[RMDB]
RNA sequence: GGGAACGACUCGAGUAGAGUCGAAAAUACUCUAGUUGGACGUUUAACAAAAGACCCAGAUUUGCGUUAUACACCGAAUGGUGUGGCGGUGGCAACUUUUACGUUAGCCGUACCACAUAAGUAUGUGCUCGCGUGUUUAUUUCGAUAAACACGCGAGAAAAGAAACAACAACAACAAC
Reactivity to DMS in 0.01 (KOAc 150mM, MgCl2 10mM, bicine 150mM(pH8.5), 24C), signal-to-noise 1, nucleotides 027 to 126: u000a010c030u000c110u000a190g010u030u020g020g000a020c030g010u000u010u000a000a030c040a060a000a040a070g030a150c240c020c070a040g010a210u030u010u000g030c020g050u000u020a130u050a070c000a040c020c010g010a070a080u010g020g050u000g030u000g010g040c030g010g000u000g000g010c040a040a020c010u010u000u000u010a070c250g030u010u000a010g020c080c010g020u010a080c020c020a000c060a030u020a040a130g010u000a010u010g000u010g010

This 177-nucleotide RNA was probed chemically with DMS.
The DMS profile rests on 842 reads.
The reactions ran in a buffer of 150 mM KOAc, 10 mM MgCl2 and 150 mM bicine (pH 8.5), at 24 C.